[RMDB]
RNA sequence: GGGAACGACUCGAGUAGAGUCGAAAAGAUUACCUAGUUUUGACCGAACAUUUUUUUAUACGGGAGCUUGCCCUUUCCUUUCUGCAUAAAUGCCCUCAUUAGAGGCACUUAUAAAGUCAGGAAGAAAGUUUAGUUAGAUGUUCGCAUCUAACUAAACAAAAGAAACAACAACAACAAC
Reactivity to 2A3 in 0.01 (KOAc 150mM, MgCl2 10mM, bicine 150mM(pH8.5), 24C), signal-to-noise 2, nucleotides 027 to 126: g000a050u080u170a160c000c010u030a110g000u010u070u050u170g080a030c040c000g020a080a030c040a070u120u020u060u120u090u190u270a180u090a100c040g020g010g010a020g050c020u030u040g020c010c000c000u010u050u040c000c010u010u010u010c000u000g000c010a010u010a000a000a000u030g010c000c020c000u060c050a070u070u140a020g010a070g000g040c000a000c010u010u010a010u030a030a010a000g000u000c000a000g010g020a000a000g050a030a050a010
Reactivity to DMS in 0.01 (KOAc 150mM, MgCl2 10mM, bicine 150mM(pH8.5), 24C), signal-to-noise 2, nucleotides 027 to 126: g010a150u000u010a140c040c020u000a080g030u010u020u010u030g020a090c190c120g000a070a070c030a030u000u000u010u040u040u010u010a090u010a110c200g010g000g010a120g000c050u000u000g000c000c000c020u000u000u000c000c000u000u000u000c000u000g020c300a000u000a010a000a010u000g000c150c010c000u000c090a160u000u000a080g020a030g000g000c000a000c050u000u000a010u000a050a300a050g000u000c020a010g000g000a010a020g000a060a030a130